[RMDB]
Conditions: 150 mM KOAc, 10 mM MgCl2 and 150 mM bicine (pH 8.5), 24 C.
Structure probing data (DMS and 2A3) for a 177-nucleotide construct.
For 2A3, 1,364 sequencing reads were counted.
High 2A3 reactivity points to a flexible backbone, as in loops and unpaired stretches.
RNA sequence: GGGAACGACUCGAGUAGAGUCGAAAAAAACUGGAAUUGCUGGACUAGCUCUACUUAUCUUUUGGAUAGUGGUUGCUGUCUCUGCUCCAUACGUCACGGAACCUAACAUACCAGAUAAGUGGAAGACCUACUUGCCCUAAUUCGUUAGGGCAAGUAGAAAAGAAACAACAACAACAAC
Reactivity to DMS in 0.01 (KOAc 150mM, MgCl2 10mM, bicine 150mM(pH8.5), 24C), signal-to-noise 2, nucleotides 027 to 126: a050a030a060c090u010g000g010a070a080u010u010g010c050u000g010g010a020c030u000a040g000c010u000c000u010a010c000u000u000a020u000c010u000u010u010u010g020g000a060u000a040g020u000g010g010u000u000g030c010u010g010u000c000u000c080u000g000c050u000c050c020a070u000a050c160g020u010c070a060c080g000g000a090a120c040c010u010a050a060c130a110u010a080c080c060a020g000a030u000a040a060g000u000g010g010a050a110g000a090c170
Reactivity to 2A3 in 0.01 (KOAc 150mM, MgCl2 10mM, bicine 150mM(pH8.5), 24C), signal-to-noise 2, nucleotides 027 to 126: a000a000a000c090u060g000g060a110a070u140u150g020c010u050g030g020a030c010u110a030g000c000u000c010u030a000c030u260u150a020u050c020u070u300u180u240g080g020a000u010a020g020u020g020g030u070u070g030c010u000g000u000c000u000c010u040g000c010u010c000c020a050u080a140c050g020u010c060a010c060g080g040a070a030c010c010u060a090a000c020a050u150a120c060c000a020g020a150u110a200a000g080u080g000g060a070a020g020a040c000